The data come from the RNA Mapping Database (RMDB), library OK3TST. This 207-nucleotide RNA was probed chemically with DMS and 2A3. In probing experiments dimethyl sulfate is read out at A N1 and C N3, which are open when not base-paired. The RNA was probed in 150 mM KOAc, 10 mM MgCl2 and 150 mM bicine (pH 8.5) at 24 C. Values cover nucleotides 27 to 156.

RNA sequence: GGGAACGACUCGAGUAGAGUCGAAAAGAAAGAAAGAAAGAAAGGUAUGAAGUCCUAUUCACUCUGGAUAGGAUAAACUUCAUAUUGAUCGUGUAUGUGCUAACGCACAUACACGAAUGCGCAUGCAGAACUGCAUGCAUGAACAUAUGGAGUGCAACACCGUAUAGUCAUUCGUGACUAUACGGUGAAAAGAAACAACAACAACAAC
Reactivity to DMS in 0.01 (KOAc 150mM, MgCl2 10mM, bicine 150mM(pH8.5), 24C), signal-to-noise 3, nucleotides 027 to 156: g040a090a020a070g040a050a060a060g020a170a150a090g010a040a080a120g030g030u000a030u000g010a120a110g000u010c000c010u010a000u000u000c010a090c160u000c300u010g000g000a020u000a010g010g000a040u000a030a070a040c010u000u000c000a000u000a000u000u010g010a080u000c000g030u000g010u000a010u010g040u000g040c000u010a080a250c300g060c000a000c000a000u000a010c000a000c010g020a020a010u000g010c080g010c010a010u000g030c010a050g010a080a130c160u000g040c040a050u020g020c010a020u000g010a050a090c140a060u000a020u000g030g010a040g030u000g020c050a080a160
Reactivity to 2A3 in 0.01 (KOAc 150mM, MgCl2 10mM, bicine 150mM(pH8.5), 24C), signal-to-noise 7, nucleotides 027 to 156: g040a010a050a020g050a030a060a000g080a100a080a010g070a060a080a010g070g020u140a070u150g050a070a020g030u000c000c000u010a010u000u020c050a060c190u190c180u220g000g000a000u000a000g020g000a020u080a050a030a000c000u000u000c000a000u010a010u040u100g040a040u020c000g000u010g000u000a000u000g010u000g000c080u140a160a040c150g000c000a000c000a000u000a000c000a000c010g010a000a010u030g020c030g000c000a000u000g000c010a020g060a300a080c190u040g000c000a000u010g000c000a010u120g050a030a010c020a030u030a020u090g020g020a030g010u050g060c030a060a040